[RMDB]
RNA sequence: GGGAACGACUCGAGUAGAGUCGAAAAAAGAAGAGAAGAUUUUCGAGGAAAUACUCCCAAGAAGUUCCCGGAGGGAUCCAAGAGACGGAUGACUUUCCCCUAUUGGUUGGGAAAAGUCCCGGAACCACGCGUUUGUGCUUCGGCACAAACAAAAGAAACAACAACAACAAC
Reactivity to DMS in 0.01 (KOAc 150mM, MgCl2 10mM, bicine 150mM(pH8.5), 24C), signal-to-noise 3, nucleotides 027 to 129: a050a060g020a010a000g020a080g010a160a090g020a150u000u000u000u000c040g000a100g020g030a040a120a210u000a170c040u020c030c160c060a120a100g030a060a140g020u030u000c000c000c000g020g000a050g010g000g010a080u030c000c000a080a010g040a100g000a110c000g040g000a100u050g000a000c010u000u000u000c020c030c000c170u050a100u090u050g020g070u080u040g030g000g050a050a030a010a040g000u010c020c000c060g010g000a000a100c070c080a070c180g020c080
Reactivity to 2A3 in 0.01 (KOAc 150mM, MgCl2 10mM, bicine 150mM(pH8.5), 24C), signal-to-noise 2, nucleotides 027 to 129: a000a030g070a000a010g010a000g000a150a000g010a020u000u060u030u050c010g000a020g010g050a100a060a000u070a090c010u000c000c000c000a010a020g040a010a000g050u010u020c030c000c000g000g000a000g010g000g000a030u030c020c010a000a000g020a010g030a040c010g000g030a050u020g000a080c000u030u000u000c030c000c000c000u040a130u100u170g120g020u150u090g010g040g020a010a030a060a010g000u010c000c010c020g000g030a010a010c060c010a050c050g130c010